An RNA of 207 nucleotides, treated with DMS and 2A3 and read out base by base. For 2A3 the reverse transcriptase was SuperScript II with manganese. Values cover nucleotides 27 to 156. High 2A3 reactivity points to a flexible backbone, as in loops and unpaired stretches. DMS adducts were read by reverse transcription with MarathonRT.
RNA sequence: GGGAACGACUCGAGUAGAGUCGAAAAUCGGGUUGCGACACUGUCAAAUUGCGGGGAGUCCCUAAAGAUUCAACUACUAAGCAGCUUGUGGAAACACAGUUGUGGCCGAGUUAAUAGCCCUGGGUAUAGUAACAAUGUUGAAUAUGACUCUUAAUUGCCUACUCUUGUACUUCGGUACAAGAGUAGGAAAAGAAACAACAACAACAAC
Reactivity to DMS in 0.01 (KOAc 150mM, MgCl2 10mM, bicine 150mM(pH8.5), 24C), signal-to-noise 1, nucleotides 027 to 156: u020c020g000g020g050u000u000g000c030g030a170c020a050c050u000g030u000c050a030a130a110u000u000g010c050g030g000g000g000a140g000u000c020c090c060u000a080a040a070g010a070u020u000c020a020a020c020u000a050c020u000a260a300g000c020a030g030c040u010u010g080u000g030g010a160a120a300c030a010c000a050g000u010u000g000u000g000g000c070c020g000a040g000u010u000a100a090u020a130g020c000c000c010u000g030g000g000u000a050u010a050g000u000a080a080c050a030a060u020g000u000u030g030a030a050u020a100u030g000a040c020u000c050u000u000a070a210u000u010g000
Reactivity to 2A3 in 0.01 (KOAc 150mM, MgCl2 10mM, bicine 150mM(pH8.5), 24C), signal-to-noise 1, nucleotides 027 to 156: u090c020g000g030g020u110u090g030c020g040a020c060a030c080u150g000u070c050a090a150a200u150u100g050c020g000g010g020g020a020g090u030c040c000c020u120a120a150a000g120a000u010u010c020a020a000c030u050a010c000u060a090a000g000c000a010g020c010u220u300g040u010g030g040a040a080a010c000a000c000a000g000u060u000g000u040g010g000c000c000g060a060g020u040u100a080a080u060a120g050c010c020c060u110g000g000g010u120a230u010a260g030u020a050a020c010a040a100u050g000u040u000g000a020a000u070a070u020g000a000c000u000c020u070u070a080a060u230u150g080